Structure probing data (DMS and 2A3) for a 177-nucleotide construct. As a SHAPE reagent, 2A3 marks flexible, mostly unpaired nucleotides at the ribose 2'-OH. The 2A3 profile rests on 2,621 reads. DMS adducts were read by reverse transcription with MarathonRT.
RNA sequence: GGGAACGACUCGAGUAGAGUCGAAAAGAUAUGGACGAUCACCUUUUGACGUCUGUCGGAAACGACAAGGACGAUAAGGUGAAUCGUCCUAAGUCAAAAUCGGAAUCAUCUUCGGAUGAUUCCGAAAGGAGGAAUUCUAGUUCGCUAGAAUUCCUCCAAAAGAAACAACAACAACAAC
Reactivity to DMS in 0.01 (KOAc 150mM, MgCl2 10mM, bicine 150mM(pH8.5), 24C), signal-to-noise 1, nucleotides 027 to 126: g020a010u010a270u010g000g020a020c010g000a080u000c010a000c000c000u060u000u010u000g030a100c080g010u000c010u030g000u010c010g020g000a110a040a120c020g010a000c010a060a090g000g010a000c020g020a080u000a050a010g030g000u000g000a040a010u010c020g000u000c000c000u000a000a060g030u000c000a060a020a100a100u000c000g000g000a020a020u000c000a000u000c000u020u000c160g030g060a020u010g000a010u000u000c000c000g000a000a020a040
Reactivity to 2A3 in 0.01 (KOAc 150mM, MgCl2 10mM, bicine 150mM(pH8.5), 24C), signal-to-noise 2, nucleotides 027 to 126: g000a000u050a000u070g000g000a000c000g010a000u010c000a000c010c020u040u220u120u300g130a050c010g000u020c020u030g020u010c010g000g000a060a030a030c010g020a010c050a070a120g200g050a000c020g040a100u080a300a110g000g030u010g020a040a010u000c010g000u000c000c000u010a000a010g000u000c010a020a010a040a270u050c000g030g020a000a000u000c010a000u000c030u170u150c300g070g000a010u020g000a000u000u010c010c000g000a020a000a000

The reactions ran in a buffer of 150 mM KOAc, 10 mM MgCl2 and 150 mM bicine (pH 8.5), at 24 C. Reactivities are rounded to 0.1 and cut off at 0 and 3.